[RMDB]
RNA sequence: GGGAACGACUCGAGUAGAGUCGAAAAGCGCAGCCACCUGCUCAUGUGCGGGCAUUGCCGGCGCUUCAUCCGCCAGAUGCGCCUGACCCAGGCGACCGUGCGCCAUCUGCCGGAAGGGCAGGGGCCGCUACUUGCACACAUUCGUGUGUGCAAGUAGAAAAGAAACAACAACAACAAC
Reactivity to 2A3 in 0.01 (KOAc 150mM, MgCl2 10mM, bicine 150mM(pH8.5), 24C), signal-to-noise 9, nucleotides 027 to 126: g020c020g010c040a030g020c020c010a280c050c020u010g000c010u010c020a070u070g040u060g070c090g050g030g010c140a240u030u300g020c020c020g090g000c000g000c000u070u040c020a070u010c000c010g000c020c000a010g000a020u030g010c010g000c000c010u060g050a170c010c010c020a000g010g000c010g000a020c020c020g120u190g030c020g010c010c000a050u020c000u010g030c040c000g060g040a140a080g060g010g000c000a000g000g000g010g000c000c000g010
Reactivity to DMS in 0.01 (KOAc 150mM, MgCl2 10mM, bicine 150mM(pH8.5), 24C), signal-to-noise 7, nucleotides 027 to 126: g000c060g020c090a120g010c020c030a120c020c010u000g000c000u000c020a090u010g020u000g000c010g000g020g000c030a140u030u040g020c020c000g010g010c000g020c000u030u020c150a150u000c000c010g000c300c010a040g000a030u000g010c030g000c000c020u010g000a190c060c050c020a300g010g010c020g030a100c070c080g000u020g000c000g010c040c010a020u010c000u000g010c300c010g000g010a030a080g000g000g010c000a020g010g010g000g000c010c140g000